[RMDB]
RNA sequence: GGGAACGACUCGAGUAGAGUCGAAAAACGUACCUAUUCGUAGGUACGUGAUUAAAAGCUAGUCAUAUAAAAGGAAGACUAGCAAUAUAGAAACCUAUAUUAAUAGCACAUGUUUCGACAUGUGCAAAGUUGUUACCAGUUUCGACUGGUAACAACUAAAAGAAACAACAACAACAAC
Reactivity to 2A3 in 0.01 (KOAc 150mM, MgCl2 10mM, bicine 150mM(pH8.5), 24C), signal-to-noise 2, nucleotides 027 to 126: a000c010g000u020a000c010c010u010a030u020u090c240g090u090a020g000g000u000a000c000g010u010g000a010u010u100a020a000a000a070g010c020u000a000g010u000c000a020u080a030u070a300a180a090a000g150g040a120a190g000a020c000u010a000g000c020a010a020u030a010u020a010g140a120a170a000c010c040u040a050u020a000u300u140a200a240u120a160g000c000a000c000a000u000g020u010u130u170c160g080a000c010a010u000g000u000g000c000a000a020
Reactivity to DMS in 0.01 (KOAc 150mM, MgCl2 10mM, bicine 150mM(pH8.5), 24C), signal-to-noise 1, nucleotides 027 to 126: a010c000g000u000a030c000c000u000a030u000u000c170g030u010a000g000g000u000a000c010g010u000g030a130u000u000a050a120a050a170g030c000u000a000g020u000c000a150u010a250u010a030a030a070a100g000g000a170a100g010a030c000u000a000g010c000a020a020u000a010u010a030g000a080a130a120c110c000u000a010u020a090u000u000a090a160u020a180g010c010a000c000a020u010g010u000u000u000c270g000a010c000a000u000g000u000g010c000a030a000

An RNA of 177 nucleotides, treated with 2A3 and DMS and read out base by base. 2A3 adducts were read by reverse transcription with SuperScript II with manganese.